[RMDB]
Source: RMDB library 15KLIB, as collected in RNAgym. An RNA of 170 nucleotides, treated with DMS and 2A3 and read out base by base. 2A3 adducts were read by reverse transcription with SuperScript II with manganese. In probing experiments dimethyl sulfate is read out at A N1 and C N3, which are open when not base-paired.
RNA sequence: GGGAACGACUCGAGUAGAGUCGAAAACAUGGUUUCCUGCCUGGGCCUCUUCGCCGGGGGCGCUCCGUCUUCGUUCUUCUUCCUUCUCAACAGUCCGACGAUGUUUCCCAGCCAGGGGUUUUCAUCCGAGCCUAGUCCUUCGGGACUAGGAAAAGAAACAACAACAACAAC
Reactivity to DMS in 0.01 (KOAc 150mM, MgCl2 10mM, bicine 150mM(pH8.5), 24C), signal-to-noise 5, nucleotides 027 to 129: c130a160u060g010g010u000u010u010c030c060u000g000c010c050u030g010g040g000c060c070u020c010u050u040c110g060c140c080g000g000g020g010g050c110g020c070u040c000c000g000u020c040u030u040c000g040u000u000c000u050u000c000u020u040c000c000u020u040c000u040c000a090a210c120a120g050u040c040c030g050a120c140g050a010u050g000u000u000u000c020c000c040a080g000c140c100a080g000g000g000g000u020u010u060u050c000a110u000c000c000g030a150g000
Reactivity to 2A3 in 0.01 (KOAc 150mM, MgCl2 10mM, bicine 150mM(pH8.5), 24C), signal-to-noise 8, nucleotides 027 to 129: c040a090u130g080g000u040u060u060c010c010u000g060c010c020u020g010g040g020c020c020u030c030u120u050c050g040c050c010g010g000g010g000g010c040g010c030u030c020c020g060u000c000u040u050c050g060u030u030c010u050u020c010u040u050c010c000u040u030c040u010c010a050a140c030a050g090u040c030c030g010a040c030g030a070u060g040u000u040u030c000c010c000a000g040c040c020a030g010g000g000g000u020u030u070u080c050a100u020c010c010g010a020g030